Chemical mapping of a 177-nucleotide RNA with DMS and 2A3.
DMS adducts were read by reverse transcription with MarathonRT.
For DMS, 1,075 sequencing reads were counted.
Values cover nucleotides 27 to 126.
Conditions: 150 mM KOAc, 10 mM MgCl2 and 150 mM bicine (pH 8.5), 24 C.
[RMDB]
RNA sequence: GGGAACGACUCGAGUAGAGUCGAAAACACUACAUCACCAAUACAAGUUUAAUGGCUACAUACGGCACUCAGUUUACACUUACAUUACAUAUGCAUUUUAACACAUCAACUAUAACACCUUUAUUUAUCUCUUGUUGUAGUUCGCUACAACAAGAGAAAAAGAAACAACAACAACAAC
Reactivity to DMS in 0.01 (KOAc 150mM, MgCl2 10mM, bicine 150mM(pH8.5), 24C), signal-to-noise 2, nucleotides 027 to 126: c060a110c050u000a050c010a010u010c020a050c010c010a020a060u020a100c150a090a080g020u010u000u030a090a090u000g010g020c000u000a070c080a040u000a120c090g030g000c060a030c050u000c100a050g000u000u000u000a080c120a060c080u000u000a080c070a040u000u000a080c070a050u000a070u000g000c030a030u000u010u000u000a010a080c050a060c090a020u000c070a030a070c070u000a070u010a030a070c070a050c070c030u000u000u000a070u000u010u010a060
Reactivity to 2A3 in 0.01 (KOAc 150mM, MgCl2 10mM, bicine 150mM(pH8.5), 24C), signal-to-noise 3, nucleotides 027 to 126: c030a020c030u050a020c030a060u030c000a030c060c020a000a040u120a080c030a050a060g010u030u070u090a120a050u060g040g000c010u020a030c020a050u070a030c060g030g020c040a000c010u050c040a040g010u020u070u080a050c060a020c010u060u050a010c000a070u050u060a050c040a020u060a020u160g030c040a040u000u090u050u050a070a010c040a000c000a040u060c000a020a080c030u060a030u040a180a020c010a050c020c000u050u120u050a140u040u120u060a120